[RMDB]
RNA sequence: GGGAACGACUCGAGUAGAGUCGAAAAAGUCGGGAGAAGUAUAGCGUACUAAUGUAGUCUCGUGAAAACGGGACGCUAUACGAUCCACCAUACGUGGAAAAACACGGAAUCGACGAAAAAUGGUGAAGGGUAUGAUUAUCUUCGGAUAAUCAUACCCAAAAGAAACAACAACAACAAC
Reactivity to 2A3 in 0.01 (KOAc 150mM, MgCl2 10mM, bicine 150mM(pH8.5), 24C), signal-to-noise 3, nucleotides 027 to 126: a000g020u020c010g000g040g000a000g010a210a020g000u000a000u000a000g000c020g080u070a050c100u160a130a240u250g010u130a060g080u040c000u020c020g010u030g080a070a060a010a000c000g000g010g000a000c000g000c000u020a000u010a000c020g000a010u000c000c000a030c000c000a020u030a060c010g000u010g060g000a190a180a050a090a020c010a000c000g010g030a020a070u090c000g010a000c000g030a010a060a060a000a000u130g000g010u100g050a160a090
Reactivity to DMS in 0.01 (KOAc 150mM, MgCl2 10mM, bicine 150mM(pH8.5), 24C), signal-to-noise 4, nucleotides 027 to 126: a130g010u000c010g030g000g000a030g000a190a090g020u000a010u000a000g010c000g050u010a100c160u030a080a110u050g020u020a140g000u010c000u010c000g020u010g000a110a080a140a000c030g000g000g000a030c000g000c000u000a000u000a000c010g000a270u010c050c010a140c010c010a030u010a110c020g010u010g010g010a080a090a100a150a170c000a010c000g010g000a080a090u030c020g000a020c010g010a030a050a050a100a040u030g000g000u000g010a140a100